[RMDB]
RNA sequence: GGGAACGACUCGAGUAGAGUCGAAAACAUAUAAUUGGACCUGUAAGUUUCAGUAGGACGGUAUUCCUAGAUUUCUACAAUUAUUUAUUACAAAGUGGUCUUUAUGAAACGCUAAGAAUAGAUAGAAUAGUACUGAUUUAUUCGUAAAUCAGUACUAAAAAGAAACAACAACAACAAC
Reactivity to DMS in 0.01 (KOAc 150mM, MgCl2 10mM, bicine 150mM(pH8.5), 24C), signal-to-noise 5, nucleotides 027 to 126: c110a080u060a110u040a090a120u020u010g000g010a130c060c020u020g020u000a070a070g000u000u000u000c030a050g000u000a060g000g000a030c130g010g010u010a090u020u010c010c000u000a110g000a150u010u010u010c010u000a050c070a100a110u040u010a010u000u000u000a010u010u000a100c020a030a290a030g030u000g010g010u000c030u010u020u030a080u060g030a060a060a080c020g010c010u000a080a290g000a010a020u000a000g000a010u000a010g010a070a130
Reactivity to 2A3 in 0.01 (KOAc 150mM, MgCl2 10mM, bicine 150mM(pH8.5), 24C), signal-to-noise 6, nucleotides 027 to 126: c020a010u220a000u140a280a140u130u110g070g000a060c010c000u020g050u100a080a080g030u040u040u060c050a030g000u040a040g020g020a010c030g060g040u090a110u070u100c020c000u040a080g030a300u040u020u020c020u050a010c000a070a020u070u030a010u040u120u020a030u010u030a160c050a050a120a010g020u020g070g050u070c000u100u190u050a160u160g090a100a110a000c020g030c030u020a100a000g020a070a050u020a020g030a010u040a010g110a110a030